[RMDB]
RNA sequence: GGGAACGACUCGAGUAGAGUCGAAAACAGCUUCGCGUCCUUGAGGCCUGGCGUAACGCGGCUCUUGCCACCAGGAAGCCUCCGCUAGUCGAGCGGACUUGGUCUCUAUCCGCCCAAAGCCCUUUUUCUUUCAACUGAGCUUGUACCAACGCGCCCCGACAUUAAUUAACUUCGGUUAAUUAAUGUCAAAAGAAACAACAACAACAAC
Reactivity to DMS in 0.01 (KOAc 150mM, MgCl2 10mM, bicine 150mM(pH8.5), 24C), signal-to-noise 1, nucleotides 027 to 156: c080a130g000c050u010u000c040g040c070g050u020c050c030u000u000g010a140g000g000c010c010u030g020g010c020g000u010a080a060c090g030c070g030g000c010u000c040u000u010g020c010c030a080c060c020a150g020g020a110a170g050c040c020u000c010c030g010c010u000a130g000u010c140g000a130g050c000g000g010a080c040u000u010g010g020u000c040u010c040u010a150u010c040c050g030c030c020c010a060a090a140g020c020c020c000u000u000u000u000u000c030u010u010u000c040a010a150c050u040g000a100g000c030u000u000g020u010a110c060c010a080a130c050g010c030g010c040c010c000c100
Reactivity to 2A3 in 0.01 (KOAc 150mM, MgCl2 10mM, bicine 150mM(pH8.5), 24C), signal-to-noise 6, nucleotides 027 to 156: c040a010g050c050u120u100c050g010c020g080u040c030c020u030u070g040a020g000g030c000c010u010g020g000c030g060u130a130a050c120g000c030g060g000c010u030c030u060u110g060c050c020a080c020c020a040g040g030a100a030g010c000c020u010c010c000g000c020u050a070g170u200c100g110a010g000c010g000g000a010c020u070u130g010g000u020c010u000c000u060a090u040c030c030g010c030c020c010a040a050a030g010c020c010c020u040u070u030u100u040c040u010u160u110c050a060a050c050u060g020a020g040c030u060u060g040u090a090c030c030a080a030c050g010c010g030c040c010c000c020